[RMDB]
An RNA of 207 nucleotides, treated with DMS and 2A3 and read out base by base.
Source: RMDB library M2RFPK, as collected in RNAgym.
The DMS profile rests on 3,537 reads.
Reactivities are given for positions 27 through 156.
Reactivities are rounded to 0.1 and cut off at 0 and 3.
Conditions: 150 mM KOAc, 10 mM MgCl2 and 150 mM bicine (pH 8.5), 24 C.
RNA sequence: GGGAACGACUCGAGUAGAGUCGAAAACGGCAAAAAAGCAAACUUGACCACCAAGGAUAAAAGAGAUCUUAUCCAAGGAUGCAAAAGAUAAUCUCACUUUUGACACCGACUGAUCUCGAACUUAAAGAAAACCGAGACUACUUCGGUAGUCUCGGAAGUAACCUGAUAAGUUCGCUUAUCAGGUUACAAAAGAAACAACAACAACAAC
Reactivity to DMS in 0.01 (KOAc 150mM, MgCl2 10mM, bicine 150mM(pH8.5), 24C), signal-to-noise 2, nucleotides 027 to 156: c030g000g050c040a000a110a020a030a100a030g010c000a110a130a160c030u000u000g010a300c210c000a100c040c050a060a300g000g030a060u010a030a020a050a130g010a220g010a130u000c040u000u000a060u010c080c020a050a230g040g010a120u000g020c020a040a120a040a030g000a050u010a050a100u000c150u030c070a120c020u000u000u000u000g000a170c110a060c000c030g000a170c030u000g010a050u000c030u000c000g000a040a090c130u010u000a060a110a120g010a080a060a090a120c000c000g000a010g010a020c000u010a010c000u010u040c300g070g020u000a010g000u000c000u010c010g010g010a000a020
Reactivity to 2A3 in 0.01 (KOAc 150mM, MgCl2 10mM, bicine 150mM(pH8.5), 24C), signal-to-noise 6, nucleotides 027 to 156: c020g030g010c030a030a030a020a050a060a030g080c060a120a090a060c050u060u050g050a110c010c020a020c030c030a080a060g060g010a070u100a130a100a030a010g030a010g000a010u000c010u050u060a040u070c060c030a030a050g030g030a080u030g010c000a010a000a010a010g030a050u130a150a200u160c060u040c100a070c030u050u000u020u020g080a090c010a020c040c010g050a040c060u100g010a020u010c000u000c020g010a050a040c040u120u120a080a080a060g080a030a080a020a010c000c000g000a000g000a000c000u000a000c000u010u050c100g040g000u000a000g000u000c000u000c000g000g000a000a000